This 177-nucleotide RNA was probed chemically with 2A3 and DMS. Source: RMDB library OK2TST, as collected in RNAgym. For DMS the reverse transcriptase was MarathonRT. The reactions ran in a buffer of 150 mM KOAc, 10 mM MgCl2 and 150 mM bicine (pH 8.5), at 24 C.

RNA sequence: GGGAACGACUCGAGUAGAGUCGAAAAAGAUAUAGCAUGCCAAUCAUGCCGCCGUCGGAACCGGCAUUAUCGUAGUAUAGGUGAACCGGAUCCGGACGUGUUGUCUUCAUCGCUGAUUGCCACGCCAGCUCACGUAUCAUUUCGAUGAUACGUGAGCAAAAGAAACAACAACAACAAC
Reactivity to 2A3 in 0.01 (KOAc 150mM, MgCl2 10mM, bicine 150mM(pH8.5), 24C), signal-to-noise 2, nucleotides 027 to 126: a050g100a020u150a020u070a080g000c010a000u040g030c030c020a020a070u150c010a010u080g010c030c030g020c010c000g000u000c000g010g020a040a030c010c000g000g000c050a020u040u020a000u040c170g030u090a160g070u110a170u060a160g150g030u040g030a090a050c000c010g000g010a010u000c010c000g070g020a040c010g110u190g070u190u170g010u000c030u080u100c030a140u090c050g050c080u030g010a040u030u040g000c000c000a030c080g000c040c000a000
Reactivity to DMS in 0.01 (KOAc 150mM, MgCl2 10mM, bicine 150mM(pH8.5), 24C), signal-to-noise 2, nucleotides 027 to 126: a110g020a070u000a080u020a140g000c030a040u000g030c270c080a030a060u000c040a020u000g020c000c080g020c020c020g030u000c010g010g000a010a050c000c000g000g010c050a050u000u000a010u000c020g010u010a130g010u020a090u000a070g010g040u000g010a080a120c030c000g010g010a070u000c000c020g000g010a020c000g000u010g030u000u000g010u000c110u020u000c140a070u020c110g010c040u000g000a040u000u000g000c200c020a070c040g000c040c070a120